Chemical mapping of a 207-nucleotide RNA with DMS and 2A3. The reactions ran in a buffer of 150 mM KOAc, 10 mM MgCl2 and 150 mM bicine (pH 8.5), at 24 C. Source: RMDB library OK3TST, as collected in RNAgym. Reactivities are given for positions 27 through 156. 2A3 adducts were read by reverse transcription with SuperScript II with manganese.
RNA sequence: GGGAACGACUCGAGUAGAGUCGAAAAUGUCUCAGGUGGGCCGAGAAGAAGAACAUUAUCAGGAGAAAGCAGACCGUGAAAAUAUGUUCCUGACACCUUCCACAGACCACAGCCCUUUCUUGAAAGGAAACCAAAAUAGCUUACAACACAAGGAUUACCUAUUUACUCGAUUCGUCGAGUAAAUAGGAAAAGAAACAACAACAACAAC
Reactivity to DMS in 0.01 (KOAc 150mM, MgCl2 10mM, bicine 150mM(pH8.5), 24C), signal-to-noise 2, nucleotides 027 to 156: u020g000u000c020u000c040a100g010g040u000g010g020g020c010c000g040a160g040a160a100g000a100a110g000a120a070c060a060u010u000a120u010c010a160g050g020a100g030a110a040a190g000c040a050g000a060c060c050g040u000g010a040a060a110a110u000a090u000g020u000u010c010c000u010g000a080c070a120c060c030u000u010c010c010a100c060a070g000a060c020c000a070c050a100g000c010c020c020u010u000u000c010u010u020g040a080a070a100g050g020a100a040a060c030c040a020a040a070a060u000a100g010c060u000u000a080c030a050a020c070a040c010a030a050g000g000a140u000u000a170
Reactivity to 2A3 in 0.01 (KOAc 150mM, MgCl2 10mM, bicine 150mM(pH8.5), 24C), signal-to-noise 4, nucleotides 027 to 156: u080g040u000c000u010c030a020g020g050u030g010g040g010c040c060g080a060g010a090a000g030a070a010g010a020a010c020a060u100u120a070u130c050a030g020g030a070g070a080a110a040g060c040a030g040a080c030c030g080u090g090a130a040a040a010u140a060u080g030u020u020c000c010u030g020a040c020a070c070c000u030u010c010c020a040c030a040g050a020c030c020a030c020a080g020c000c010c020u030u130u030c040u010u080g040a100a030a010g020g000a020a020a040c020c010a000a020a030a030u040a040g020c020u040u040a030c040a070a010c020a050c010a090a010g020g010a050u070u060a030